[RMDB]
This 177-nucleotide RNA was probed chemically with DMS and 2A3. Reactivities are given for positions 27 through 126. Conditions: 150 mM KOAc, 10 mM MgCl2 and 150 mM bicine (pH 8.5), 24 C.
RNA sequence: GGGAACGACUCGAGUAGAGUCGAAAAUGUCAGGGUUCGAGGGUAUCAGUAGCUGCCCCAUCAGUUUGCCGUCAUGGGCGUACUCAAAGUAUUUUUCUUUGGUAUACGGGUCCGUCACCUCCUGGUACUUCUCUAGGGAGUUCGCUCCCUAGAGAAGAAAAGAAACAACAACAACAAC
Reactivity to DMS in 0.01 (KOAc 150mM, MgCl2 10mM, bicine 150mM(pH8.5), 24C), signal-to-noise 2, nucleotides 027 to 126: u000g010u010c040a070g020g000g030u010u000c130g000a090g000g010g040u000a040u010c030a060g030u000a080g020c040u000g010c110c040c050c080a080u020c060a040g020u000u000u000g020c040c030g020u010c220a070u010g010g000g020c030g000u000a010c030u010c040a020a040a040g010u000a050u010u010u010u010u000c000u000u000u000g010g010u000a060u000a070c060g000g000g010u000c000c040g000u000c040a040c040c030u000c030c000u010g010g010u010a090
Reactivity to 2A3 in 0.01 (KOAc 150mM, MgCl2 10mM, bicine 150mM(pH8.5), 24C), signal-to-noise 2, nucleotides 027 to 126: u140g040u060c030a000g000g010g080u080u090c050g040a030g010g030g020u100a060u150c000a030g080u090a040g060c050u060g030c010c000c020c000a110u180c010a000g090u040u080u130g020c010c000g040u080c040a080u060g030g040g000c000g010u000a000c030u040c240a040a040a060g020u010a220u040u210u000u090u000c020u030u030u060g020g000u060a030u010a120c050g040g000g000u020c010c030g040u010c010a010c020c000u040c010c000u000g030g000u040a140